[RMDB]
RNA sequence: GGGAACGACUCGAGUAGAGUCGAAAAGCCCAGCGAGACCGGUGGGUUAAUACGCGGAGGGGCUGCGGGGGAGGACUUAGGGGACCAGGACCUCAGUGAGGCCCCAGAAAGCACCCGGGAGGGGCCUCGGUAUCUACGAGUUCGCUCGUAGAUACCGAAAAGAAACAACAACAACAAC
Reactivity to DMS in 0.01 (KOAc 150mM, MgCl2 10mM, bicine 150mM(pH8.5), 24C), signal-to-noise 1, nucleotides 027 to 126: g030c000c000c000a110g010c000g000a220g030a130c060c050g050g000u020g000g000g000u000u070a050a250u010a060c210g000c170g000g020a130g010g030g010g000c170u060g000c180g000g000g000g000g000a130g030g050a080c100u060u040a060g000g000g000g000a070c120c170a040g000g040a080c050c030u000c070a120g000u040g000a020g000g030c040c000c000c000a080g000a090a100a040g020c080a060c030c000c050g000g020g010a110g000g030g000g010c000c000u000
Reactivity to 2A3 in 0.01 (KOAc 150mM, MgCl2 10mM, bicine 150mM(pH8.5), 24C), signal-to-noise 3, nucleotides 027 to 126: g010c000c000c010a010g050c040g030a090g070a130c020c030g050g120u050g030g010g000u040u080a130a050u160a090c060g010c070g010g040a130g020g010g000g010c130u110g030c130g000g000g000g000g000a060g040g000a020c030u080u100a020g000g000g010g000a000c000c020a030g040g070a080c030c010u030c000a020g060u040g080a020g020g000c000c000c000c000a010g090a020a080a020g040c040a080c010c000c000g010g000g000a040g010g000g000g000c000c000u020